[RMDB]
RNA sequence: GGGAACGACUCGAGUAGAGUCGAAAAUCUGCAGGAUCAUGACAGUGGAGAAUACGUUUGCAGAGCCUGGAACAAAUACGGUGAGGACUUUACCCGUACCACCCUCAAUUGUGGAGGACGUGGCGGAACGGCAGGUGGUAUUCGUACCACCUGCCGUAAAAGAAACAACAACAACAAC
Reactivity to 2A3 in 0.01 (KOAc 150mM, MgCl2 10mM, bicine 150mM(pH8.5), 24C), signal-to-noise 1, nucleotides 027 to 126: u020c000u000g000c000a000g000g150a060u050c020a080u050g070a070c020a090g080u000g120g000a080g010a150a050u180a050c060g030u040u020u030g000c010a000g000a000g070c000c030u030g000g040a140a000c040a040a040a020u190a020c050g000g000u020g050a080g070g030a040c040u060u090u120a050c000c000c000g070u060a100c000c020a000c010c040c010u000c020a030a220u200u240g050u090g250g050a010g000g000a060c090g000u030g000g000c010g040g050a000
Reactivity to DMS in 0.01 (KOAc 150mM, MgCl2 10mM, bicine 150mM(pH8.5), 24C), signal-to-noise 1, nucleotides 027 to 126: u000c020u000g030c020a040g000g000a140u000c060a100u000g000a170c100a070g000u000g000g000a210g020a080a120u000a160c080g010u010u010u000g020c010a060g000a070g000c030c030u000g070g050a070a030c070a100a090a100u000a010c130g000g040u010g000a140g000g010a090c090u000u030u010a050c160c010c010g000u000a120c000c000a000c000c010c000u000c020a020a100u010u010g010u010g010g000a040g000g010a120c060g010u000g050g000c100g010g000a100